The record gives the reactivity of an RNA of 207 nucleotides to 2A3. For 2A3 the reverse transcriptase was SuperScript II with manganese. The reactions ran in a buffer of 150 mM KOAc, 10 mM MgCl2 and 150 mM bicine (pH 8.5), at 24 C. High 2A3 reactivity points to a flexible backbone, as in loops and unpaired stretches.
RNA sequence: GGGAACGACUCGAGUAGAGUCGAAAAGAGUUCGAAAUCAAGCGGUACGUGGACGGCGAGGGUUACAACAUGGGCCAGUCCAACAUGACCAAGGAUUGGUUCAUGGUUCAGAUGCUGGCCCACUAUAACAUCGGCUACCAGGGCUACUACCUGCCAGCCGACAUUGCCAAUUCGUUGGCAAUGUCGGAAAAGAAACAACAACAACAAC
Reactivity to 2A3 in 0.01 (KOAc 150mM, MgCl2 10mM, bicine 150mM(pH8.5), 24C), signal-to-noise 1, nucleotides 027 to 156: g130a000g020u060u040c030g010a070a030a070u110c020a040a030g000c020g030g030u020a020c130g080u040g000g000a020c050g000g000c020g000a110g050g050g010u080u000a070c090a190a000c050a080u070g000g020g000c000c000a000g000u030c000c000a000a080c060a040u070g070a050c040c130a000a070g260g080a220u120u040g000g130u070u070c000a000u000g000g000u010u050c030a050g050a160u180g070c000u040g000g000c000c020c000a020c000u030a000u010a030a030c030a100u000c000g040g000c010u030a070c050c000a060g000g100g000c000u120a120c040u020a090c070c000u080g020c020c000a030g000